[RMDB]
RNA sequence: GGGAACGACUCGAGUAGAGUCGAAAAGCUCGUCCACUCCGAUCGAGCCACUAGGAGCUAUCGGAACUCUUAGCGGAGUGACCAAAUCUAUCGACUUCAGUUGGACAUCGUGAGAUCGAGGUCCAAAGACGUUUGAAGCCUUCGGGUUUCGAACGUCAAAAGAAACAACAACAACAAC
Reactivity to 2A3 in 0.01 (KOAc 150mM, MgCl2 10mM, bicine 150mM(pH8.5), 24C), signal-to-noise 9, nucleotides 027 to 126: g020c010u010c020g030u040c040c020a020c010u000c010c000g030a080u090c050g040a020g060c020c010a020c010u020a030g020g000a020g010c020u070a070u190c070g050g050a030a030c000u000c000u020u030a010g020c010g020g000a000g000u020g020a030c010c030a020a030a050u060c030u080a060u070c030g080a060c030u080u040c070a080g020u060u030g010g000a000c000a020u010c010g020u040g110a100g010a050u130c000g000a000g000g020u000c000c000a000a010a010
Reactivity to DMS in 0.01 (KOAc 150mM, MgCl2 10mM, bicine 150mM(pH8.5), 24C), signal-to-noise 8, nucleotides 027 to 126: g010c090u000c030g010u010c050c070a060c020u000c020c010g000a080u030c080g010a080g000c010c050a300c030u000a060g010g010a020g010c040u010a140u020c180g000g030a250a110c020u000c000u000u000a040g000c080g010g000a030g000u000g000a100c060c080a060a080a070u040c070u020a090u020c030g000a040c060u010u000c050a100g030u000u010g000g000a030c020a030u000c010g000u020g000a150g010a130u030c000g010a040g000g010u000c000c000a040a020a070